[RMDB]
RNA sequence: GGGAACGACUCGAGUAGAGUCGAAAAGGUGCCUGCACCGAAGCACUCAUCCACAAUCAUCUGCCCCGGUUUAUGAGCGUAAACCACGCGCCCGUGGCUGUCGGUUUCCAGCAGGCGACCACCGACAAUUUAUUUUACCUUUCGAGGUAAAAUAAAUAAAAGAAACAACAACAACAAC
Reactivity to DMS in 0.01 (KOAc 150mM, MgCl2 10mM, bicine 150mM(pH8.5), 24C), signal-to-noise 9, nucleotides 027 to 126: g020g020u010g020c010c010u000g020c020a140c220c100g000a060a070g010c040a050c040u000c030a040u000c030c030a050c080a140a100u000c110a080u010c110u000g010c020c040c080c070g010g010u000u000u000a040u000g000a120g020c110g010u000a040a070a080c080c060a090c070g000c070g000c070c100c070g030u010g000g010c040u010g000u000c080g000g010u000u000u000c040c070a180g000c020a020g000g000c010g010a030c030c020a180c020c020g010a090c140a080
Reactivity to 2A3 in 0.01 (KOAc 150mM, MgCl2 10mM, bicine 150mM(pH8.5), 24C), signal-to-noise 5, nucleotides 027 to 126: g000g000u010g000c010c010u020g030c020a050c060c090g030a030a010g030c040a030c100u050c010a080u050c030c020a050c050a040a100u150c060a050u030c080u140g010c010c010c010c010g010g040u060u100u060a110u110g140a080g070c040g010u020a010a100a140c040c000a020c040g010c010g010c010c030c030g020u010g020g000c000u010g050u020c010g010g000u010u020u040c040c030a040g000c000a010g010g020c050g080a010c000c010a020c000c000g020a010c030a020
Chemical mapping of a 177-nucleotide RNA with DMS and 2A3. The 2A3 profile rests on 8,500 reads. The reactions ran in a buffer of 150 mM KOAc, 10 mM MgCl2 and 150 mM bicine (pH 8.5), at 24 C.